This 177-nucleotide RNA was probed chemically with 2A3 and DMS. The reactions ran in a buffer of 150 mM KOAc, 10 mM MgCl2 and 150 mM bicine (pH 8.5), at 24 C. For DMS the reverse transcriptase was MarathonRT. Values cover nucleotides 27 to 126.
RNA sequence: GGGAACGACUCGAGUAGAGUCGAAAACAGGAGAGGCUGCCAGUUCUGAUGGUGAGCCAGGACACAAGGAUAGGAGAACAGGAAGCAGGAGGCAGGAAAAAGACCAAGAGAGAGGAGUGGCUGCCACCAAAUACGAAUUGUUCGCAAUUCGUAUUUGAAAAGAAACAACAACAACAAC
Reactivity to 2A3 in 0.01 (KOAc 150mM, MgCl2 10mM, bicine 150mM(pH8.5), 24C), signal-to-noise 3, nucleotides 027 to 126: c020a010g080g030a070g030a020g040g010c030u040g020c020c000a050g050u160u030c040u150g160a160u060g050g030u040g050a010g020c000c000a010g000g020a020c010a000c020a090a060g050g000a030u110a070g090g000a050g030a050a020c020a030g000g070a050a020g000c030a020g030g040a040g010g000c050a030g080g000a010a090a040a040a000g040a010c030c020a060a010g050a000g010a000g000a020g080g000a020g000u030g040g000c020u030g000c000c000a020c020
Reactivity to DMS in 0.01 (KOAc 150mM, MgCl2 10mM, bicine 150mM(pH8.5), 24C), signal-to-noise 7, nucleotides 027 to 126: c080a110g010g000a130g010a080g020g020c040u000g000c020c030a070g010u000u010c110u000g010a140u000g000g020u000g000a060g020c050c020a050g000g000a090c090a080c120a080a060g010g010a080u010a050g010g010a060g000a070a050c090a060g000g010a050a080g030c080a050g010g010a060g010g010c050a040g000g010a040a050a070a100a070g000a070c030c040a040a090g000a090g010a080g010a070g000g010a070g020u000g010g010c040u000g000c030c040a110c160